Description: This 207-nucleotide RNA was probed chemically with 2A3 and DMS. As a SHAPE reagent, 2A3 marks flexible, mostly unpaired nucleotides at the ribose 2'-OH. The 2A3 profile rests on 1,781 reads. The DMS profile rests on 3,202 reads. For DMS the reverse transcriptase was MarathonRT.

[RMDB]
RNA sequence: GGGAACGACUCGAGUAGAGUCGAAAAGUUUGUGCGUUUCCAUUUGAGUAUCCUGAAAACGGGCUUUUCAGCAUGGAACGUACAUAUUAAAUAGUAGGAGUGCAUAGUGGCCCGUAUAGCAGGCAUUGAGGCGAGGAUUGUUUCGACAAUCCUCGAACAUAGAGUACGACUUCGGUCGUACUCUAUGAAAAGAAACAACAACAACAAC
Reactivity to 2A3 in 0.01 (KOAc 150mM, MgCl2 10mM, bicine 150mM(pH8.5), 24C), signal-to-noise 2, nucleotides 027 to 156: g020u020u020u040g030u010g010c030g000u010u080u000c020c010a020u070u030u040g030a020g020u070a130u160c010c010u030g040a050a040a030a030c080g020g000g000c040u080u070u080u040c040a060g010c050a020u020g040g000a040a010c000g010u010a000c000a010u020a000u000u140a070a040a040u090a010g060u000a020g000g050a040g020u040g040c020a050u080a100g050u040g030g000c010c010c010g000u020a040u080a070g000c050a000g030g000c020a010u010u150g090a030g020g070c020g010a000g000g010a000u000u020g000u000u060u070c100g030a010c000a020a000u000c000c000u000c000g000a010a000
Reactivity to DMS in 0.01 (KOAc 150mM, MgCl2 10mM, bicine 150mM(pH8.5), 24C), signal-to-noise 2, nucleotides 027 to 156: g000u000u000u000g020u000g000c020g020u010u000u000c000c020a080u010u010u010g020a120g030u010a090u000c030c020u000g010a040a040a100a130c060g010g040g020c040u000u000u000u010c020a080g010c100a040u010g000g020a010a010c010g000u000a060c010a060u000a030u000u000a050a130a140u010a190g010u000a060g000g000a160g030u000g030c050a070u010a100g020u010g000g000c000c010c010g030u010a060u000a130g050c010a070g030g040c070a120u000u010g000a140g020g000c010g030a030g030g010a020u010u010g000u000u000u000c220g030a050c020a000a030u000c000c000u020c010g000a030a080